Chemical mapping of a 177-nucleotide RNA with DMS and 2A3.
The RNA was probed in 150 mM KOAc, 10 mM MgCl2 and 150 mM bicine (pH 8.5) at 24 C.
Reactivities are rounded to 0.1 and cut off at 0 and 3.
High DMS reactivity at an A or C suggests that its Watson-Crick edge is free.
Values cover nucleotides 27 to 126.
The data come from the RNA Mapping Database (RMDB), library OK2TRN.
RNA sequence: GGGAACGACUCGAGUAGAGUCGAAAAAAGCGUGUGGGCGUUGUCAGUAAGUGUCAAGCCUGUGGGCGUUGUCACUAAGUGUCUGCAAACAUCUGUGAUUCCUCCCAGACACAUCGCUGGCUGGAGACGCUCUCUUCACGUUCGCGUGAAGAGAGCGAAAAGAAACAACAACAACAAC
Reactivity to DMS in 0.01 (KOAc 150mM, MgCl2 10mM, bicine 150mM(pH8.5), 24C), signal-to-noise 1, nucleotides 027 to 126: a030a070g040c020g030u000g050u010g010g020g000c110g000u000u000g010u000c040a050g000u000a130a000g010u000g000u010c020a090a140g000c000c000u010g010u000g010g000g020c060g000u000u020g020u020c030a010c020u000a040a170g010u000g000u000c010u000g020c100a150a140a100c050a040u010c100u040g030u020g020a250u000u000c040c070u000c030c080c010a010g000a050c010a010c050a100u030c180g020c060u000g000g000c060u050g020g010a150g000a070
Reactivity to 2A3 in 0.01 (KOAc 150mM, MgCl2 10mM, bicine 150mM(pH8.5), 24C), signal-to-noise 1, nucleotides 027 to 126: a000a000g070c110g020u030g020u020g030g140g000c030g060u000u070g110u070c020a010g040u220a240a020g010u010g020u030c020a030a030g060c020c030u090g050u300g120g020g050c080g110u020u080g000u040c030a020c020u030a120a050g090u000g020u140c070u120g090c060a000a080a000c030a110u050c100u160g090u070g070a170u000u060c000c000u000c060c000c000a020g030a020c020a000c000a070u150c060g010c080u050g040g020c030u080g000g010a090g000a000